[RMDB]
RNA sequence: GGGAACGACUCGAGUAGAGUCGAAAAGACUCCGAGGCGAUGGACGCGUUUGGCCUGCUGUGUCGCAUGGAAGGCAUCAUCCCGGCUAUUGAAUCCGCGCACGCGGUGGCCGGCGCCCUCAAGCUAGCACCAUGGUUACAUUCGUGUAACCAUGGUGAAAAGAAACAACAACAACAAC
Reactivity to DMS in 0.01 (KOAc 150mM, MgCl2 10mM, bicine 150mM(pH8.5), 24C), signal-to-noise 4, nucleotides 027 to 126: g020a110c060u010c010c030g010a110g000g000c020g020a160u000g000g010a050c130g010c050g030u010u000u010g060g010c000c010u010g040c030u000g000u000g000u000c070g030c040a080u010g020g000a090a120g010g000c020a050u010c170a140u010c070c020c000g010g000c000u000a140u000u000g010a130a120u000c020c020g020c040g030c150a060c080g000c000g000g010u010g000g000c000c010g010g000c060g000c010c010c010u010c140a120a140g010c080u000a100g010
Reactivity to 2A3 in 0.01 (KOAc 150mM, MgCl2 10mM, bicine 150mM(pH8.5), 24C), signal-to-noise 3, nucleotides 027 to 126: g040a040c030u000c030c000g020a080g010g000c020g020a060u170g040g050a050c080g050c030g020u030u030u300g030g000c010c030u060g010c030u040g030u010g030u090c050g020c040a020u110g040g010a060a070g040g000c010a040u060c010a040u070c100c030c010g000g010c020u050a100u160u240g130a100a050u050c010c000g000c000g000c000a010c040g030c000g020g010u010g000g000c000c000g000g020c010g010c010c000c000u020c020a060a030g020c010u070a030g040